[RMDB]
This 177-nucleotide RNA was probed chemically with 2A3 and DMS. For DMS, 3,321 sequencing reads were counted. Values cover nucleotides 27 to 126. The reactions ran in a buffer of 150 mM KOAc, 10 mM MgCl2 and 150 mM bicine (pH 8.5), at 24 C. It was measured as part of the RMDB library OK2TRN. For DMS the reverse transcriptase was MarathonRT.
RNA sequence: GGGAACGACUCGAGUAGAGUCGAAAAAGUAGUCACUGUACCGGCGGCCCGCCCCGUAACCACGGAAAUUGUAGAAGUUCCUCCAACGAGACCUAGCGCUCGUCCGGCGGUGGUGCCUUCUAGAACAUGCGUUAAGAGAAUUCGUUCUCUUAACGCAAAAAGAAACAACAACAACAAC
Reactivity to 2A3 in 0.01 (KOAc 150mM, MgCl2 10mM, bicine 150mM(pH8.5), 24C), signal-to-noise 2, nucleotides 027 to 126: a050g070u070a000g010u020c010a030c090u080g070u130a050c030c000g000g020c010g000g000c040c010c000g060c020c000c020c030g040u100a130a070c090c030a030c020g060g000a040a100a120u180u120g150u120a090g040a210a020g050u040u010c010c000u000c020c010a000a050c020g010a020g020a010c010c130u110a030g000c060g050c290u020c030g010u040c040c000g150g010c030g000g000u030g020g010u040g030c000c020u050u040c020u070a070g020a140a030c040a060
Reactivity to DMS in 0.01 (KOAc 150mM, MgCl2 10mM, bicine 150mM(pH8.5), 24C), signal-to-noise 4, nucleotides 027 to 126: a070g010u000a060g010u000c010a060c060u000g000u000a050c050c020g020g000c050g010g000c010c030c040g030c030c050c010c030g000u000a090a130c150c140a060c120g010g000a080a050a070u020u000g000u000a080g010a090a100g000u000u000c020c010u010c100c080a120a060c030g010a020g000a030c020c100u000a110g010c130g020c020u000c020g000u000c050c030g010g000c090g000g010u000g000g020u000g000c090c010u000u000c020u000a100g000a060a090c210a100